[RMDB]
The record gives the reactivity of an RNA of 177 nucleotides to DMS and 2A3. The 2A3 profile rests on 2,421 reads. The reactions ran in a buffer of 150 mM KOAc, 10 mM MgCl2 and 150 mM bicine (pH 8.5), at 24 C. Values cover nucleotides 27 to 126. Source: RMDB library OK1LIB, as collected in RNAgym. High DMS reactivity at an A or C suggests that its Watson-Crick edge is free.
RNA sequence: GGGAACGACUCGAGUAGAGUCGAAAACGCACGAUCGAGCCUUGUGGUGCGUUGCCCAGUGCGGCGUCCAGCCAAUCCGGUGCGUCGCAGGGGCGCGGCUUGUAGGCGUCGGCGAAUUGGGUGACGCCUCGAUAUGCGGCUUCGGCCGCAUAUCGAGAAAAGAAACAACAACAACAAC
Reactivity to DMS in 0.01 (KOAc 150mM, MgCl2 10mM, bicine 150mM(pH8.5), 24C), signal-to-noise 2, nucleotides 027 to 126: c000g040c030a010c040g010a050u030c060g020a040g000c010c010u020u060g000u010g040g020u000g030c010g060u010u010g030c020c010c000a040g030u000g020c010g000g010c040g000u050c080c090a130g120c150c120a160a110u070c110c110g000g030u050g000c020g000u030c000g000c000a020g020g000g030g000c000g000c220g000g010c000u000u020g010u030a080g010g000c000g010u000c010g000g030c040g010a130a220u030u020g020g000g010u000g000a050c020g000c040
Reactivity to 2A3 in 0.01 (KOAc 150mM, MgCl2 10mM, bicine 150mM(pH8.5), 24C), signal-to-noise 4, nucleotides 027 to 126: c010g020c010a060c070g040a200u110c050g070a030g030c010c020u180u140g070u140g140g060u180g080c000g000u010u120g000c000c000c000a040g140u010g020c000g000g020c000g000u030c050c110a020g000c020c000a040a040u120c030c100g020g010u080g020c010g000u000c010g000c020a040g020g000g000g000c040g000c020g000g040c000u000u070g180u040a040g010g020c000g040u010c010g030g070c040g100a130a120u150u160g140g020g000u070g060a020c010g010c020